[RMDB]
RNA sequence: GGGAACGACUCGAGUAGAGUCGAAAAUUGCAUACAUAGAGAGUAGACAUUUCAGGUGAUAUAAAUUCUGGAAAUAGGCAUGAUAUGCAAGCCUGAUGUAUUCUCUUGAUUGAACUGGAGGGUGCUGUUGGGGAAUAGUGGUAAAUAAGGUUGAAGACUUAGGUAGUCUGUUCGCAGACUACCUAAGAAAAGAAACAACAACAACAAC
Reactivity to 2A3 in 0.01 (KOAc 150mM, MgCl2 10mM, bicine 150mM(pH8.5), 24C), signal-to-noise 3, nucleotides 027 to 156: u110u070g010c010a020u020a140c020a010u130a040g020a000g010a000g050u070a010g040a070c040a060u080u110u050c010a020g020g010u040g070a030u040a010u060a230a130a120u130u060c040u120g030g090a080a120a080u060a050g060g000c060a030u040g060a090u090a010u160g050c030a060a030g010c000c000u000g000a020u030g020u020a040u060u010c000u000c000u010u050g050a080u060u080g040a100a060c040u030g010g010a010g010g010g030u050g020c050u060g020u140u080g000g000g000g040a000a030u040a020g030u030g040g010u040a030a030a050u140a020a080g080g050u110u110g040a060a180g010a030
Reactivity to DMS in 0.01 (KOAc 150mM, MgCl2 10mM, bicine 150mM(pH8.5), 24C), signal-to-noise 1, nucleotides 027 to 156: u010u000g040c050a100u010a120c050a110u000a210g020a040g000a070g080u000a100g010a080c010a160u000u000u010c050a030g030g050u000g000a100u010a070u000a070a130a070u000u010c060u010g000g020a050a090a140u000a100g020g030c020a040u010g000a150u000a150u000g040c050a090a270g010c030c020u010g080a050u000g000u000a080u000u000c010u030c010u000u000g000a170u000u010g010a070a070c100u000g010g010a150g020g030g010u000g000c050u000g000u000u000g020g000g040g010a070a080u010a070g040u010g030g010u000a030a050a100u010a040a080g020g030u000u000g000a090a120g000a160